Record summary: Chemical mapping of a 177-nucleotide RNA with DMS and 2A3. The reactions ran in a buffer of 150 mM KOAc, 10 mM MgCl2 and 150 mM bicine (pH 8.5), at 24 C. It was measured as part of the RMDB library OK2TST.

RNA sequence: GGGAACGACUCGAGUAGAGUCGAAAAAGGCCAGUGGCGAUGAGCGUGAGGAGCUGCGUGCGGUUCAUGCGGGCCCCGAUCUACAUGGAUUUCGGUGGCGAUCUGUGACCAGACACUAGGCUGCGCCGCUGAGAAUGUCUUUCGAGACAUUCUCAGCAAAAGAAACAACAACAACAAC
Reactivity to DMS in 0.01 (KOAc 150mM, MgCl2 10mM, bicine 150mM(pH8.5), 24C), signal-to-noise 4, nucleotides 027 to 126: a100g020g000c020c030a060g020u010g010g010c020g000a110u000g010a100g020c020g030u000g010a100g000g010a140g000c020u000g020c140g010u000g020c050g000g000u000u000c040a020u000g010c090g010g010g020c000c010c010c040g000a060u000c030u000a120c180a110u000g020g000a050u000u010u000c050g020g010u010g010g020c040g010a050u010c040u000g000u000g000a060c070c030a120g010a140c040a040c030u000a140g000g000c020u010g000c120g000c040c050
Reactivity to 2A3 in 0.01 (KOAc 150mM, MgCl2 10mM, bicine 150mM(pH8.5), 24C), signal-to-noise 3, nucleotides 027 to 126: a000g040g010c020c000a000g020u030g070g000c060g030a070u100g080a050g060c050g000u070g050a070g030g070a050g030c030u050g020c070g070u060g020c010g000g060u070u070c010a010u070g030c030g060g100g000c010c000c000c010g000a010u000c000u100a200c070a250u290g050g040a040u060u100u080c060g000g040u090g010g000c020g020a070u000c010u050g040u070g060a050c030c000a010g050a070c010a010c030u080a100g000g030c000u040g000c020g030c000c020